[RMDB]
RNA sequence: GGGAACGACUCGAGUAGAGUCGAAAACGUAACAUGACUAUUUCAUUUUACGAGAAUAGAAAGGAUUCGGUAUGCGAAACUAGCACAGACGAAAUAGAUGGUAGUAUUACUUGUGUUUUACGCAUAACUCAUGGGAGUAGUUCGCUACUCCCAUGAGAAAAGAAACAACAACAACAAC
Reactivity to 2A3 in 0.01 (KOAc 150mM, MgCl2 10mM, bicine 150mM(pH8.5), 24C), signal-to-noise 3, nucleotides 027 to 126: c010g000u020a030a010c010a030u020g040a020c050u210a230u140u250u010c000a000u000u010u010u020a010c010g000a010g100a110a090u130a110g080a070a170a020g160g020a040u130u080c070g080g020u080a000u010g000c010g010a100a020a020c090u020a050g020c020a010c030a010g070a050c060g100a060a090a000u080a060g170a110u110g120g110u080a070g000u040a110u110u080a040c040u060u020g030u000g020u010u000u060u060a050c020g000c020a020u000a040a100
Reactivity to DMS in 0.01 (KOAc 150mM, MgCl2 10mM, bicine 150mM(pH8.5), 24C), signal-to-noise 4, nucleotides 027 to 126: c030g010u010a000a010c050a000u010g010a080c300u000a100u000u010u010c000a010u000u000u000u020a010c040g000a140g010a050a030u000a120g010a040a050a110g030g000a110u010u000c060g000g020u000a020u000g010c010g010a070a040a120c300u000a010g010c010a030c010a040g010a100c140g000a060a040a080u000a060g000a110u000g010g020u000a050g000u000a070u010u000a060c060u000u010g020u000g000u000u000u000u000a110c010g000c040a000u030a030a180